[RMDB]
RNA sequence: GGGAACGACUCGAGUAGAGUCGAAAAUGGUACCGUAACUGGUCAUGCGUAAUUAACGUUAGCGCAUCGCGGUGCGUCAGUACACGUACACUAGCGUGCUGACUACGUACGCGGUUAGUUGAUGCGCGCACUAAUCAUGGCGUAUGUGCACAUGUCGUGUUCCCCAUCCGUUCGCGGAUGGGGAACAAAAAGAAACAACAACAACAAC
Reactivity to 2A3 in 0.01 (KOAc 150mM, MgCl2 10mM, bicine 150mM(pH8.5), 24C), signal-to-noise 1, nucleotides 027 to 156: u090g080g000u010a010c020c000g020u020a130a000c050u040g000g000u030c040a110u090g070c020g000u300a130a080u260u200a280a190c120g040u060u130a000g080c040g010c000a030u060c050g010c040g020g000u040g050c020g000u020c110a000g060u060a070c040a000c000g020u090a000c110a090c280u090a130g000c000g000u000g030c060u000g060a090c060u020a000c030g060u000a020c170g080c100g290g000u080u160a060g000u020u200g060a070u000g020c010g000c000g000c030a030c030u090a010a010u080c090a100u060g020g010c020g000u110a030u130g080u070g000c000a000c000a090u170g020u170c040g110